[RMDB]
RNA sequence: GGGAACGACUCGAGUAGAGUCGAAAACCAUUCCUUAUACCUUGAGUAUUGCGGAAUUCAGUUUAGCGUGCAUGCUCUUGGCUAUUCUCAUAGUGAUUGUCAAAUUUGGAGUUACUUAUUCGUCAAUAAAACACUACCACGUUCGCGUGGUAGUGAACGUAUGUAGCUACUUCGGUAGCUACAUACGAAAAGAAACAACAACAACAAC
Reactivity to DMS in 0.01 (KOAc 150mM, MgCl2 10mM, bicine 150mM(pH8.5), 24C), signal-to-noise 2, nucleotides 027 to 156: c030c040a190u010u010c010c050u000u020a120u000a010c010c010u050u000g000a050g010u000a010u010u010g050c040g020g000a090a080u000u000c160a200g030u000u000u010a080g000c100g000u020g030c080a110u010g020c020u000c000u010u050g010g030c060u010a070u010u000c040u000c060a130u000a130g080u000g010a040u000u000g020u000c020a100a050a140u000u000u000g010g000a170g000u000u000a070c070u000u000a100u010u000c070g010u020c050a040a100u000a030a060a090a100c000a020c010u000a000c000c000a020c010g000u000u000c300g030c030g000u000g040g000u010a000g020u000g000a010a060
Reactivity to 2A3 in 0.01 (KOAc 150mM, MgCl2 10mM, bicine 150mM(pH8.5), 24C), signal-to-noise 5, nucleotides 027 to 156: c020c000a040u050u070c000c010u060u090a060u030a080c000c010u000u060g020a020g050u020a070u130u170g010c040g020g150a200a160u170u140c070a120g150u040u110u280a070g060c090g030u070g000c020a000u020g000c000u000c000u040u000g000g020c000u030a040u090u060c110u020c080a120u140a130g080u050g150a110u080u050g120u060c050a040a130a200u090u050u090g030g010a040g040u090u060a080c040u180u150a070u160u140c060g130u030c110a110a120u070a130a060a030a000c000a000c000u010a000c000c000a010c000g010u040u040c170g050c000g080u000g000g000u010a000g000u000g010a010a010

Chemical mapping of a 207-nucleotide RNA with DMS and 2A3.